[RMDB]
RNA sequence: GGGAACGACUCGAGUAGAGUCGAAAAAGGAUACCAGCUCGUACGCGAGCUGGUAUGCAAAAAUUGGUGUAGCCUUACCGUAGUAGGCACAAAAACGUCAGCUGGAUCUACGGAUCCAGCUGACGAAAAAAGUGUUUUGUGUUCGCACAAAACACAACGAGUAUCAAUGGUUCGCCAUUGAUACUCGAAAAGAAACAACAACAACAAC
Reactivity to 2A3 in 0.01 (KOAc 150mM, MgCl2 10mM, bicine 150mM(pH8.5), 24C), signal-to-noise 1, nucleotides 027 to 156: a000g060g000a000u000a000c000c000a000g010c020u000c010g000u020a020c270g000c020g100a020g000c000u000g010g010u000a000u010g000c010a000a090a130a110a040u200u300g010g010u080g090u220a010g000c000c000u000u000a000c030c040g030u000a000g000u000a000g010g000c020a000c010a020a050a040a020a000c000g000u000c000a000g000c000u020g030g000a000u000c000u010a040c290g090g000a000u000c000c000a000g030c000u000g000a000c000g000a000a000a000a000a000a010g000u000g000u000u000u000u000g000u000g010u020u050c140g060c070a000c000a000a000a000a000c000a000c000a000a020